An RNA of 177 nucleotides, treated with 2A3 and DMS and read out base by base. 2A3 adducts were read by reverse transcription with SuperScript II with manganese. DMS adducts were read by reverse transcription with MarathonRT. In probing experiments dimethyl sulfate is read out at A N1 and C N3, which are open when not base-paired. The DMS profile rests on 3,469 reads.
RNA sequence: GGGAACGACUCGAGUAGAGUCGAAAAGGCGGGCGAGUGGGGUGUGUGGCCGAAAGCGCCUUGUACGCGCGCCGUGUGAAUGCUUUGUGCGGGUAGGGAGAUGGCGGCCACCGUUGUAUCCUCAUAGGCGGCUUUCGUCCUUCGGGAUGGAAGCCGCAAAAGAAACAACAACAACAAC
Reactivity to 2A3 in 0.01 (KOAc 150mM, MgCl2 10mM, bicine 150mM(pH8.5), 24C), signal-to-noise 2, nucleotides 027 to 126: g150g020c070g020g030g000c090g040a100g060u120g000g040g030g000u050g000u000g020u020g030g030c020c000g060a080a040a010g040c040g020c010c010u010u130g110u090a080c070g070c020g040c000g020c050c030g040u070g010u010g080a190a130u140g010c040u050u130u170g040u090g030c020g000g040g060u070a050g020g060g000a100g010a020u080g060g000c000g000g000c000c000a000c010c000g000u000u000g000u000a100u010c000c010u000c000a060u030a130g060
Reactivity to DMS in 0.01 (KOAc 150mM, MgCl2 10mM, bicine 150mM(pH8.5), 24C), signal-to-noise 2, nucleotides 027 to 126: g020g000c070g000g000g030c100g030a110g020u020g000g000g000g000u000g000u000g000u000g000g030c030c020g000a040a070a120g030c020g000c050c000u000u060g010u000a110c210g050c040g020c030g020c040c100g000u000g000u010g000a090a060u010g020c070u030u040u050g020u070g000c010g000g000g000u000a060g000g000g000a130g020a110u010g000g000c030g020g000c010c010a040c000c070g000u000u000g000u000a080u010c020c010u010c040a050u020a090g000